[RMDB]
RNA sequence: GGGAACGACUCGAGUAGAGUCGAAAACUCGUCUGGUUCGCCAGACGAGAAAGAAAAUCCGAGCGAAGGGAAGGGCACAAACGCUCGGAGUGCCCAAACCCUAAACGUGGGGGUUCGCCCCCACGAAGCUUAUUUGAACGUUCGCGUUCAAAUAAGCAAAAGAAACAACAACAACAAC
Reactivity to 2A3 in 0.01 (KOAc 150mM, MgCl2 10mM, bicine 150mM(pH8.5), 24C), signal-to-noise 2, nucleotides 027 to 126: c000u000c000g000u010c020u010g000g070u040u040c180g100c090c000a010g000a000c000g000a000g000a020a000a030g010a020a080a000a000u020c010c020g030a010g040c040g130a140a020g030g040g030a010a060g060g040g000c070a020c050a110a300a020c110g050c040u090c070g040g000a000g000u050g000c000c000c010a090a180a120c040c000c010u060a100a120a000c020g000u000g000g010g000g010g050u000u040c180g090c020c000c010c000c010a000c000g000a000a020
Reactivity to DMS in 0.01 (KOAc 150mM, MgCl2 10mM, bicine 150mM(pH8.5), 24C), signal-to-noise 1, nucleotides 027 to 126: c000u000c000g000u000c000u040g000g000u000u010c200g040c000c000a000g030a020c010g010a000g000a010a060a080g020a110a160a070a140u000c010c010g000a080g010c030g020a180a130g010g000g010a190a160g000g000g040c040a060c070a030a130a160c060g020c060u000c070g020g000a060g000u000g000c010c000c010a090a130a170c030c010c030u000a020a040a150c050g000u000g000g000g010g000g010u000u020c220g010c010c000c000c000c000a010c000g000a030a040
The record gives the reactivity of an RNA of 177 nucleotides to 2A3 and DMS. Values cover nucleotides 27 to 126. The 2A3 profile rests on 1,810 reads. The RNA was probed in 150 mM KOAc, 10 mM MgCl2 and 150 mM bicine (pH 8.5) at 24 C. For DMS, 969 sequencing reads were counted. For DMS the reverse transcriptase was MarathonRT.